[RMDB]
RNA sequence: GGGAACGACUCGAGUAGAGUCGAAAAGGGCGGAUGACGGAAAACCUCCAUAUCGGAGUCUGAAGCGGAGGAGCCGCUUUCAUCGUCGGCUUGAUCGCCGUACACGUGAUGGUAUUCCAGUUUGGCCAUUAGGCGGUGUUGAUCGACCAAACGCGCCAUCCGGGGUAUUAUUCGUAAUACCCCGGAUAAAAGAAACAACAACAACAAC
Reactivity to 2A3 in 0.01 (KOAc 150mM, MgCl2 10mM, bicine 150mM(pH8.5), 24C), signal-to-noise 2, nucleotides 027 to 156: g030g020g040c080g000g030a080u090g000a030c040g010g130a040a050a090a090c030c000u060c030c020a100u200a150u300c180g070g020a060g080u060c120u160g030a050a010g020c050g000g000a070g060g030a060g080c000c010g020c040u060u050u020c020a030u010c000g050u000c020g000g030c040u040u020g010a020u040c030g020c030c000g040u100a070c090a020c110g100u190g050a000u050g000g030u070a160u170u070c030c000a060g070u050u050u140g050g000c020c000a040u040u040a030g030g030c030g000g020u050g120u110u160g080a100u060c010g010a020c040c000a010a200a000c040g020c000g030c080c030
Reactivity to DMS in 0.01 (KOAc 150mM, MgCl2 10mM, bicine 150mM(pH8.5), 24C), signal-to-noise 2, nucleotides 027 to 156: g030g000g020c020g000g010a050u010g010a250c060g030g000a080a080a080a060c080c010u010c000c010a200u010a110u000c070g020g010a080g030u000c080u010g020a080a120g000c020g020g010a080g080g040a220g040c030c000g000c080u000u000u010c040a070u000c050g000u010c030g030g000c010u000u010g020a110u000c120g000c020c050g010u000a080c040a090c110g020u010g010a060u010g010g010u000a160u000u010c090c030a140g000u000u010u010g040g010c000c010a130u000u000a120g010g010c000g060g030u000g020u010u010g010a100u000c010g000a100c030c000a020a050a050c020g030c100g000c030c060